Notes
An RNA of 207 nucleotides, treated with 2A3 and read out base by base. Reactivities are given for positions 27 through 156. The reactions ran in a buffer of 150 mM KOAc, 10 mM MgCl2 and 150 mM bicine (pH 8.5), at 24 C. For 2A3 the reverse transcriptase was SuperScript II with manganese.
RNA sequence: GGGAACGACUCGAGUAGAGUCGAAAAGGAUUACGUCAUGGUCGGCACCAAGACGGUCAACGGCAAAGAGGUGCCGAAUUGUGUCCCCGAAGACGAGGCCGACCCCGCGGACCUCCAAGCCCUUGCCGCGAGUGACGACCGGUGCGGUGAGGGCAAGCGAGUCUAAUCUUUUCGAAGAUUAGACUCGAAAAGAAACAACAACAACAAC
Reactivity to 2A3 in 0.01 (KOAc 150mM, MgCl2 10mM, bicine 150mM(pH8.5), 24C), signal-to-noise 2, nucleotides 027 to 156: g070g020a050u150u170a110c060g000u040c080a030u110g100g000u000c010g020g000c000a000c030c010a010a100g110a080c080g000g020u080c050a180a090c090g080g060c100a100a130a040g100a060g060g040u040g040c020c000g000a010a020u060u060g040u010g050u030c030c000c010c060g110a140a020g140a040c020g000a020g000g010c000c000g020a080c020c000c000c030g060c030g000g030a230c000c000u030c000c020a080a000g000c000c000c000u000u000g010c020c000g010c030g040a050g060u150g050a100c110g020a000c010c000g020g040u110g010c010g010g010u020g010a000g000g000g000c000a000a000g000